Source information:
The record gives the reactivity of an RNA of 177 nucleotides to DMS. For DMS, 1,060 sequencing reads were counted. The reactions ran in a buffer of 150 mM KOAc, 10 mM MgCl2 and 150 mM bicine (pH 8.5), at 24 C.

RNA sequence: GGGAACGACUCGAGUAGAGUCGAAAAUAAAACCUUGAUGUGUAGGAUAGGUGGGAGGCUUUGAAGUGUGGACGCCAGUCUGCAUGGAGCCGACCUUGAAAUACCACCCAUUAAUGGAAAAAAAAAACCUUCAUUGUUGAUUCGUCAACAAUGAAGGAAAAGAAACAACAACAACAAC
Reactivity to DMS in 0.01 (KOAc 150mM, MgCl2 10mM, bicine 150mM(pH8.5), 24C), signal-to-noise 1, nucleotides 027 to 126: u000a050a130a140a060c000c000u000u000g000a000u000g000u000g000u010a000g000g000a030u000a000g010g010u000g000g000g000a050g030g010c000u000u000u010g020a120a130g000u000g020u000g000g010a010c000g010c070c270a010g000u010c020u000g010c020a000u000g000g000a000g010c010c000g010a070c300c010u000u000g000a000a010a150u000a100c020c000a010c000c000c000a000u000u000a000a000u000g010g010a020a020a000a000a000a030a130a090a140a130